Chemical mapping of a 177-nucleotide RNA with DMS.
[RMDB]
RNA sequence: GGGAACGACUCGAGUAGAGUCGAAAAUUGUCCGGGUUCGCCCGGACAAAGCGGGAGGCGACCGGAGGCCUCCUCCCAGGCGAUCGCACGCCUCGCUCCGGAGCGUGAUGACCUUCGGGUCAUCAAAAAAUGCGGAGUAUUUCGAUACUCCGCAUUUAAAAGAAACAACAACAACAAC
Reactivity to DMS in 0.01 (KOAc 150mM, MgCl2 10mM, bicine 150mM(pH8.5), 24C), signal-to-noise 2, nucleotides 027 to 126: u000u000g000u000c000c020g010g020g030u000u010c200g020c020c020c010g000g000a000c000a010a010a080g020c230g010g010g010a010g020g010c020g000a060c060c030g000g010a030g000g000c000c000u000c040c010u000c000c000c010a120g000g020c010g000a050u000c300g000c150a210c000g010c030c000u010c090g000c020u000c010c000g000g000a240g000c220g040u000g000a020u010g000a010c000c000u000u010c170g040g000g020u010c000a010u010c010a010a030a060
Source information
Reactivities are given for positions 27 through 126. Values are in units of 0.01, from 0 to 300, in steps of 10. The DMS profile rests on 1,360 reads. Source: RMDB library M2PK50, as collected in RNAgym.